An RNA of 177 nucleotides, treated with 2A3 and DMS and read out base by base.
2A3 adducts were read by reverse transcription with SuperScript II with manganese.
The data come from the RNA Mapping Database (RMDB), library OK2TRN.
RNA sequence: GGGAACGACUCGAGUAGAGUCGAAAAGGAAUUGUUGCCCUACAUCAGCACUCCGCGUAGUUACGAUAAUGGUUCGUUGCAGGGUGUUGCUAUGCGAUAUGGCUGGAGUUCGGGUGUUACAACCACCGGUGAACCGACUAUUCGUAGUCGGUUCACCAAAAGAAACAACAACAACAAC
Reactivity to 2A3 in 0.01 (KOAc 150mM, MgCl2 10mM, bicine 150mM(pH8.5), 24C), signal-to-noise 1, nucleotides 027 to 126: g070g030a040a180u110u050g020u190u140g030c120c000c030u020a010c040a070u110c000a010g000c000a000c050u050c040c000g000c030g000u000a000g020u060u090a000c040g030a090u050a210a240u200g180g040u140u180c140g060u190u180g030c030a090g020g030g010u160g060u080u010g020c000u000a000u000g030c000g010a020u010a080u250g070g000c070u000g020g000a060g000u070u130c070g050g010g070u140g060u160u080a010c000a000a040c000c100a000c030c040
Reactivity to DMS in 0.01 (KOAc 150mM, MgCl2 10mM, bicine 150mM(pH8.5), 24C), signal-to-noise 2, nucleotides 027 to 126: g000g000a130a110u020u000g030u000u010g010c020c020c020u000a050c050a050u000c030a060g000c000a030c020u010c130c000g000c030g030u000a020g000u000u000a010c030g060a070u020a120a120u000g030g000u000u010c140g000u010u000g050c060a090g010g030g040u010g000u000u000g000c050u010a020u000g010c040g000a100u010a080u010g000g000c010u000g010g000a060g020u000u000c300g000g020g000u000g010u000u000a050c060a050a060c100c010a120c120c050